[RMDB]
RNA sequence: GGGAACGACUCGAGUAGAGUCGAAAAAUCGUCAUUGAUAUGGAUGAGUGAACUACAACCUGCGUCUCCUUGGACCUCGGAAACGAGCUAGGAGACCAGGUUGCACUCAUCCUAAGUCCACAACCAACACAGGCAUCUUCUUCGGAAGAUGCCUGUGAAAAGAAACAACAACAACAAC
Reactivity to DMS in 0.01 (KOAc 150mM, MgCl2 10mM, bicine 150mM(pH8.5), 24C), signal-to-noise 1, nucleotides 027 to 126: a050u010c020g040u040c230a100u020u020g000a050u000a260u000g000g000a020u010g000a010g000u000g010a100a040c070u000a300c010a000a020c010c010u010g000c170g000u000c000u000c000c000u010u010g050g020a160c300c000u010c020g000g000a040a020a190c010g000a020g020c090u000a000g020g000a000g010a000c000c000a010g000g020u000u000g070c000a000c000u000c000a000u000c000c000u020a000a110g000u020c070c080a070c060a070a120c110c070a040a180